[RMDB]
RNA sequence: GGGAACGACUCGAGUAGAGUCGAAAAACGGAAAGAGGGUUUGCAAAUCCGACGUCGUGAGACACGGACCUCAUGGGAAGAAGAAGCAACUUUAGUGUUAGAGAGAUACUGUUAAUGAGCUCUAACACACAUCCACCUACUUCGGUAGGUGGAUGUGAAAAGAAACAACAACAACAAC
Reactivity to 2A3 in 0.01 (KOAc 150mM, MgCl2 10mM, bicine 150mM(pH8.5), 24C), signal-to-noise 4, nucleotides 027 to 126: a000c040g030g050a060a080a020g060a060g000g020g000u070u200u080g040c040a010a140a000u060c000c000g100a040c070g010u050c000g000u060g080a050g030a020c070a010c040g040g020a040c000c010u050c020a050u050g030g040g030a020a060g020a030a000g070a050a020g030c020a030a060c020u090u110u160a060g010u010g000u010u010a000g010a000g000a000g010a050u070a230c040u090g080u200u100a160a070u150g050a040g060c010u000c000u000a000a000c000a000
Reactivity to DMS in 0.01 (KOAc 150mM, MgCl2 10mM, bicine 150mM(pH8.5), 24C), signal-to-noise 4, nucleotides 027 to 126: a100c130g000g020a040a100a040g010a110g000g000g000u000u010u030g040c140a110a090a130u010c000c010g030a150c130g010u000c020g040u010g010a220g000a050c030a140c100g000g010a070c090c010u010c070a090u000g000g000g000a130a080g000a080a060g010a100a100g010c100a080a030c190u000u010u020a080g000u000g010u000u020a000g000a000g000a050g000a080u010a090c170u010g020u040u020a060a080u010g010a150g020c000u000c010u000a000a010c000a020
Notes
Source: RMDB libraries RFM100 and RFMREP, as collected in RNAgym. Structure probing data (2A3 and DMS) for a 177-nucleotide construct. For 2A3 the reverse transcriptase was SuperScript II with manganese. Values are in units of 0.01, from 0 to 300, in steps of 10. The RNA was probed in 150 mM KOAc, 10 mM MgCl2 and 150 mM bicine (pH 8.5) at 24 C.